RNA sequence: GGGAACGACUCGAGUAGAGUCGAAAACGGCGGUCCUUGGACUAACAGCCCCAAAAACGGCCAGUAGUUUUCUUGGCUGAUUUGCUGUUGGCAUGGGGGCGUCUCGUAGCUGGGAGGUCCGGAGCGGCGAUAAAUAUUAAUUCGUUAAUAUUUAUCGAAAAGAAACAACAACAACAAC
Reactivity to 2A3 in 0.01 (KOAc 150mM, MgCl2 10mM, bicine 150mM(pH8.5), 24C), signal-to-noise 6, nucleotides 027 to 126: c020g040g000c000g000g090u030c000c010u020u110g100g010a030c000u000a030a010c010a020g010c000c000c020c010a040a080a000a020a010c020g020g000c000c000a010g020u060a030g010u040u000u150u050c040u060u070g070g000c050u010g050a110u030u020u090g000c000u000g000u060u020g010g000c030a040u040g010g000g000g020g010c000g010u010c010u000c020g040u030a040g010c050u080g010g020g020a040g010g040u020c030c010g000g010a050g020c020g020g000
Reactivity to DMS in 0.01 (KOAc 150mM, MgCl2 10mM, bicine 150mM(pH8.5), 24C), signal-to-noise 8, nucleotides 027 to 126: c060g000g010c040g010g000u000c010c010u020u020g010g010a080c020u000a070a090c110a130g010c030c170c050c070a070a060a040a090a120c080g010g000c000c000a020g010u010a060g010u030u010u010u010c020u010u020g010g010c040u000g000a080u020u000u010g000c010u000g000u000u000g000g010c070a080u020g010g010g010g010g000c010g000u010c020u010c050g010u010a080g000c100u020g000g000g000a050g000g010u010c030c020g010g000a060g010c030g000g000